[RMDB]
RNA sequence: GGGAACGACUCGAGUAGAGUCGAAAAGUCAGCAAGGACUGCGACAAGCUGGCACGAAACUGGUUCCUCAGUCGCCUUAACAAGAGCACCGGAUUGAAGGCGACCAACACGGGCAGUGCAUCACCAAGAUCAUCAUAUCCUUCGGGAUAUGAUGAUCAAAAGAAACAACAACAACAAC
Reactivity to DMS in 0.01 (KOAc 150mM, MgCl2 10mM, bicine 150mM(pH8.5), 24C), signal-to-noise 3, nucleotides 027 to 126: g010u010c040a050g020c010a150a270g030g010a120c060u000g000c050g000a130c100a060a180g010c030u010g020g010c030a190c170g020a050a060a090c120u010g000g020u000u010c030c020u020c250a120g000u000c010g030c000c020u000u000a110a080c090a020a090g000a110g050c050a080c050c050g010g020a070u010u010g000a060a030g020g010c000g000a020c020c130a060a090c110a090c090g000g000g020c020a050g010u000g020c050a040u000c070a070c060c110a080a140
Reactivity to 2A3 in 0.01 (KOAc 150mM, MgCl2 10mM, bicine 150mM(pH8.5), 24C), signal-to-noise 2, nucleotides 027 to 126: g030u010c020a000g010c020a040a080g120g080a100c050u090g040c040g060a050c030a060a020g010c010u020g020g010c030a020c100g100a020a120a030c040u070g000g060u070u060c010c000u040c020a000g010u010c000g010c000c010u100u050a160a030c020a090a030g030a010g140c030a020c090c100g100g040a150u000u120g060a040a000g030g000c020g000a010c010c000a080a000c020a000c020g050g040g000c010a030g010u040g070c040a070u060c010a040c080c000a060a020
Source: RMDB library OK2TRN, as collected in RNAgym. Chemical mapping of a 177-nucleotide RNA with DMS and 2A3. The DMS profile rests on 1,860 reads. For DMS the reverse transcriptase was MarathonRT. For 2A3, 2,416 sequencing reads were counted. 2A3 adducts were read by reverse transcription with SuperScript II with manganese.